Overview
The record gives the reactivity of an RNA of 177 nucleotides to DMS and 2A3. It was measured as part of the RMDB library OK2TRN. For 2A3, 2,754 sequencing reads were counted. For 2A3 the reverse transcriptase was SuperScript II with manganese. For DMS, 1,737 sequencing reads were counted.
RNA sequence: GGGAACGACUCGAGUAGAGUCGAAAAAGCAAGCUUCCAGGCGGUCAAGGGAAAGCUCGCAACAGGGCAGGACAUAGACAGCGAUGCUACACAUCUAGUGUACCUGCUGCAGCUGUAUGCUUGCACCUCGACUAGAUCUGUUCGCAGAUCUAGUCGAAAAAGAAACAACAACAACAAC
Reactivity to DMS in 0.01 (KOAc 150mM, MgCl2 10mM, bicine 150mM(pH8.5), 24C), signal-to-noise 3, nucleotides 027 to 126: a130g020c020a060a010g000c020u010u010c080c030a110g030g000c090g020g000u000c050a110a110g000g010g000a120a150a030g000c000u000c120g020c050a070a040c070a100g040g010g020c060a040g030g020a070c080a050u000a050g000a060c100a040g010c080g010a160u010g020c060u010a010c090a090c050a190u000c090u010a150g000u010g020u010a060c030c000u000g010c010u000g000c080a070g000c000u010g010u010a040u020g000c010u010u010g000c030a130c030c050
Reactivity to 2A3 in 0.01 (KOAc 150mM, MgCl2 10mM, bicine 150mM(pH8.5), 24C), signal-to-noise 3, nucleotides 027 to 126: a000g010c020a010a000g000c000u070u000c060c020a020g090g000c040g030g060u090c080a140a190g100g020g050a100a100a030g000c010u050c070g040c000a000a110c040a160g070g060g000c040a030g030g040a020c020a080u090a030g120a060c040a030g010c010g060a030u130g010c050u130a020c040a000c000a090u060c110u160a090g100u010g000u130a280c010c020u030g000c010u020g020c030a020g030c030u030g010u060a030u090g000c000u000u020g000c010a080c010c020